Notes
An RNA of 177 nucleotides, treated with DMS and read out base by base. DMS adducts were read by reverse transcription with MarathonRT. It was measured as part of the RMDB library TTRINS.
[RMDB]
RNA sequence: GGGAACGACUCGAGUAGAGUCGAAAAGAUAUGGAGCAUGGAAGAAGCUAUUUAGGCGUUGAAAUUUGGAAGCUCGGAAACGAGCUUCCAAAUGGAGCCUAUGUAGUGUAAACAUGCUCCUAAGUCAGUAAAGCUAUGUGUUCGCACAUAGCUUUACAAAAGAAACAACAACAACAAC
Reactivity to DMS in 0.01 (KOAc 150mM, MgCl2 10mM, bicine 150mM(pH8.5), 24C), signal-to-noise 1, nucleotides 027 to 126: g050a030u000a300u020g030g000a030g050c000a000u020g000g030a020a180g010a200a300g030c030u000a030u000u000u000a000g000g000c000g090u000u020g010a150a090a030u000u000u000g050g000a080a000g000c000u050c000g080g000a030a080a140c000g030a000g000c000u000u000c020c020a000a000a000u000g000g020a200g000c020c030u000a000u000g000u000a000g000u000g000u000a000a080a300c000a000u000g000c020u010c000c000u000a000a080g000u000c000a170